[RMDB]
RNA sequence: GGGAACGACUCGAGUAGAGUCGAAAAAACGUUGCAUGAUCGUAAAACAUGCCCGGCUUACCGUGAGCCGUCUUUGAAAGAAAGGUUUACACGGACUCUGUUGCGUUACGCACGUACCUAACUUGUGAAAACGGCAUCUUGUUCGCAAGAUGCCGAAGGAUAAUUCGCAGUUCGCUGCGAAUUAUCCAAAAGAAACAACAACAACAAC
Reactivity to 2A3 in 0.01 (KOAc 150mM, MgCl2 10mM, bicine 150mM(pH8.5), 24C), signal-to-noise 2, nucleotides 027 to 156: a000a000c000g000u010u010g000c000a010u000g000a040u260c030g060u160a050a050a050a040c000a000u000g000c000c000c000g000g000c000u010u050a100c010c000g010u010g010a000g010c000c000g080u000c060u020u030u060g130a180a070a010g050a000a030a000g010g000u090u110u060a040c000a000c000g160g010a120c050u070c040u070g160u120u010g020c010g020u030u040a100c190g030c030a010c010g010u040a050c020c000u060a150a180c080u110u140g050u020g140a060a120a020a020c010g010g000c000a000u010c020u000u010g000u030u080c090g010c090a000a000g000a000u040g020c000c000g000a000a020